[RMDB]
RNA sequence: GGGAACGACUCGAGUAGAGUCGAAAACAACCAGUACCUCGGCGCGAUCGAUAGCCCGUCGAGCUGCGGGUGUCAGAUAAUCAGCAUCACCGGGGCCAAUCCCCACCACCGUAAUCAUCGUAACGCCAUGUGUGAACAUUUUCGAAUGUUCACACAUAAAAGAAACAACAACAACAAC
Reactivity to DMS in 0.01 (KOAc 150mM, MgCl2 10mM, bicine 150mM(pH8.5), 24C), signal-to-noise 5, nucleotides 027 to 126: c090a110a100c050c060a110g010u000a070c080c020u000c040g020g010c060g010c080g000a090u000c070g010a070u000a120g030c020c010c000g020u000c050g000a110g010c100u000g010c040g000g000g010u000g000u000c090a100g020a090u010a060a090u000c100a100g020c020a080u010c090a080c050c020g000g010g000g020c080c070a080a080u010c050c000c010c040a100c090c040a030c060c050g010u010a090a050u010c050a030u000c050g000u000a080a090c110g010c050c110
Reactivity to 2A3 in 0.01 (KOAc 150mM, MgCl2 10mM, bicine 150mM(pH8.5), 24C), signal-to-noise 3, nucleotides 027 to 126: c010a000a070c020c020a010g080u120a080c010c020u020c020g020g000c010g030c020g070a040u090c020g030a040u060a090g080c000c020c020g040u050c040g090a070g000c090u070g000c020g000g030g000u030g060u050c010a040g010a070u090a090a080u110c030a020g040c010a040u020c010a010c010c040g000g030g000g030c000c000a020a090u070c000c000c030c000a000c000c000a020c000c000g050u040a050a060u030c030a020u070c020g040u040a020a020c000g000c030c040

An RNA of 177 nucleotides, treated with DMS and 2A3 and read out base by base. For 2A3, 5,540 sequencing reads were counted. Conditions: 150 mM KOAc, 10 mM MgCl2 and 150 mM bicine (pH 8.5), 24 C.